RNA sequence: GGGAACGACUCGAGUAGAGUCGAAAAUCUUAAUGACGAAAGCUGAGUUAAUGGACCGUAUUACUGGUUUACUCGGUGGACGCGUAGCCGAAGAAGUUACUUUCGGUGAAGUAACAACAGGUGCAAAACCAUAGUGGUGCUUCGGCACCACUAUGGUAAAAGAAACAACAACAACAAC
Reactivity to 2A3 in 0.01 (KOAc 150mM, MgCl2 10mM, bicine 150mM(pH8.5), 24C), signal-to-noise 2, nucleotides 027 to 126: u020c000u010u140a140a070u110g120a090c000g040a010a000a000g040c010u020g010a010g000u040u240a220a060u180g130g000a000c090c010g000u050a140u070u270a130c160u090g000g050u010u000u000a000c010u010c020g010g010u040g000g000a020c030g030c040g040u000a030g020c020c010g020a090a050g020a040a010g070u020u170a020c000u070u020u050c040g140g020u200g000a030a000g020u030a000a030c010a000a000c000a020g120g000u200g070c010a050a130a000
Reactivity to DMS in 0.01 (KOAc 150mM, MgCl2 10mM, bicine 150mM(pH8.5), 24C), signal-to-noise 2, nucleotides 027 to 126: u000c010u010u000a050a110u020g020a260c010g020a000a280a240g010c010u010g010a020g010u010u010a160a080u010g010g000a020c020c000g040u000a170u020u010a170c120u060g020g000u000u000u020a020c030u000c000g000g010u010g000g000a300c030g000c040g000u000a150g000c000c010g010a020a130g020a080a240g000u000u000a010c040u000u000u000c130g040g010u020g020a030a050g000u010a000a020c010a030a290c040a080g000g010u010g030c110a120a050a040